[RMDB]
RNA sequence: GGGAACGACUCGAGUAGAGUCGAAAAGUCUUGCGUGAGCAAGACAGAACGCUCGUGAGAGCGUUCAACAUGAUCUACGGAUCAUGACUUCGGCACUUCGGUGCCGAAGAGCCAACGGUGACGUUGGCACCAAUACGUGAGUAUUGGACGCGCUCGUACGCGAGCGCGAGUGUGGUACUUCGGUACCACACAUUUAAACUGCUAGCCACCUCUGGUCUCGACCGCUGUACUAGAGGUGGGCUGACGGUGUUUGGCGAUGCGGUCAUACGGAUCACUUCGGUGAUCCGAAAAGAAACAACAACAACAAC
Reactivity to DMS in 0.01 (KOAc 150mM, MgCl2 10mM, bicine 150mM(pH8.5), 24C), signal-to-noise 4, nucleotides 027 to 266: g000u010c000u000u000g010c000g010u020g000a260g000c000a010a000g020a000c010a050g010a010a010c000g010c000u000c000g010u020g000a100g000a020g010c000g010u000u000c010a130a300c010a010u000g000a010u000c010u000a160c210g010g000a010u000c000a000u000g000a220c010u000u000c000g000g020c000a010c000u000u030c160g020g010u010g000c000c010g010a000a000g020a250g010c010c000a010a000c000g000g000u030g010a140c010g000u000u000g000g030c010a060c010c010a010a000u000a010c000g000u020g010a240g000u000a000u000u000g000g000a300c010g010c000g010c010u000c020g030u010a100c180g020c000g010a010g020c000g030c010g010a040g010u000g010u000g000g000u000a000c010u000u020c190g010g010u010a000c010c000a000c000a000c010a020u010u000u010a060a110a070c100u020g010c070u000a070g000c000c010a030c010c010u000c010u000g010g000u000c030u000c100g000a070c110c090g000c080u000g010u020a010c000u000a000g000a010g000g010u010g010g000g010c020u010g000a070c070g000g010u000g010u000u000u010g010g010c140g010a100u010g000c090g000g000u010c020a140u010a130
Reactivity to 2A3 in 0.01 (KOAc 150mM, MgCl2 10mM, bicine 150mM(pH8.5), 24C), signal-to-noise 3, nucleotides 027 to 266: g000u010c000u020u010g000c020g020u150g070a120g010c010a010a000g000a000c010a010g000a000a000c000g000c010u000c000g000u040g000a100g010a000g000c010g000u000u000c000a000a010c010a000u000g000a000u000c010u040a080c280g140g000a000u000c000a000u020g090a040c010u010u000c000g000g030c000a000c000u020u050c220g070g000u000g000c000c000g000a000a000g000a020g010c000c000a000a000c000g030g090u110g040a030c010g000u010u010g000g000c000a010c000c000a000a000u000a000c040g060u070g200a070g020u000a000u000u000g020g000a030c010g000c000g000c000u000c010g000u030a020c250g010c000g120a000g000c000g030c000g000a080g000u010g000u000g000g000u010a000c020u040u060c300g060g000u000a000c020c000a000c000a000c010a000u030u040u050a050a150a050c040u090g090c080u110a040g060c020c010a000c000c030u010c020u030g030g010u030c030u050c070g100a080c040c050g010c100u060g050u130a000c020u020a010g000a010g020g000u040g020g000g020c020u020g010a020c030g020g040u080g060u110u110u150g050g040c070g060a050u060g010c000g040g000u040c010a020u140a110

The record gives the reactivity of an RNA of 307 nucleotides to DMS and 2A3. The RNA was probed in 150 mM KOAc, 10 mM MgCl2 and 150 mM bicine (pH 8.5) at 24 C.